[RMDB]
Source: RMDB library RFM100, as collected in RNAgym. Chemical mapping of a 177-nucleotide RNA with 2A3. The RNA was probed in 150 mM KOAc, 10 mM MgCl2 and 150 mM bicine (pH 8.5) at 24 C.
RNA sequence: GGGAACGACUCGAGUAGAGUCGAAAACGGCCGUUCUUGAGCGCGAGGUCGGCCUUGACGAUGCCCCAGUGGUCGAGGAUCAGGGCAUUGGUGAUGACGGUGUCGGCCACUUCUUCGGCCAACCUUUCGUUUGCACUGUUUUCGAACAGUGCAAACGAAAAGAAACAACAACAACAAC
Reactivity to 2A3 in 0.01 (KOAc 150mM, MgCl2 10mM, bicine 150mM(pH8.5), 24C), signal-to-noise 2, nucleotides 027 to 126: c030g000g000c020c010g020u060u020c040u060u100g040a060g040c140g000c020g100a010g000g020u000c000g010g020c000c000u030u030g070a010c000g030a020u030g010c000c030c000c000a090g130u020g110g000u070c060g100a110g030g090a060u020c140a040g000g000g000c000a020u030u030g090g040u120g040a090u140g030a070c060g020g000u050g050u190c000g050g000c030c030a030c010u020u010c040u110u110c000g000g010c000c010a000a050c030c000u010u000u030